[RMDB]
RNA sequence: GGGAACGACUCGAGUAGAGUCGAAAAGAUAUGGAGCAUAGACAUGCUGGAUAACAGCAACAGCAGAGAGCUCGGAAACGAGCUCUCUGACAUGCUGCUAAUACAGCAACAGCUAUGCUCCUAAGUCCUUGGUCUAAUAGUUCGCUAUUAGACCAAGAAAAGAAACAACAACAACAAC
Reactivity to DMS in 0.01 (KOAc 150mM, MgCl2 10mM, bicine 150mM(pH8.5), 24C), signal-to-noise 3, nucleotides 027 to 126: g000a100u020a300u000g000g000a020g020c020a010u020a000g010a090c110a250u000g010c010u010g000g000a110u000a110a130c030a010g010c000a010a090c260a160g010c010a010g010a010g020a030g010c000u000c000g000g010a090a110a230c000g000a000g020c000u000c010u000c000u000g020a030c070a140u000g010c010u010g020c000u010a100a060u000a110c020a010g020c000a040a080c300a190g000c020u000a000u000g000c000u000c010c000u010a010a110g000u000c060
Reactivity to 2A3 in 0.01 (KOAc 150mM, MgCl2 10mM, bicine 150mM(pH8.5), 24C), signal-to-noise 2, nucleotides 027 to 126: g060a010u160a070u300g000g000a000g000c000a000u020a000g100a150c060a120u130g010c000u020g000g030a050u050a120a040c010a020g000c030a030a090c070a250g110c020a000g010a000g000a000g000c020u030c030g000g030a120a100a020c000g010a000g010c000u000c000u000c000u000g020a000c010a020u070g010c000u010g010c000u040a050a020u250a210c000a000g000c010a030a050c060a030g050c010u000a000u010g000c000u010c000c000u010a010a020g010u020c010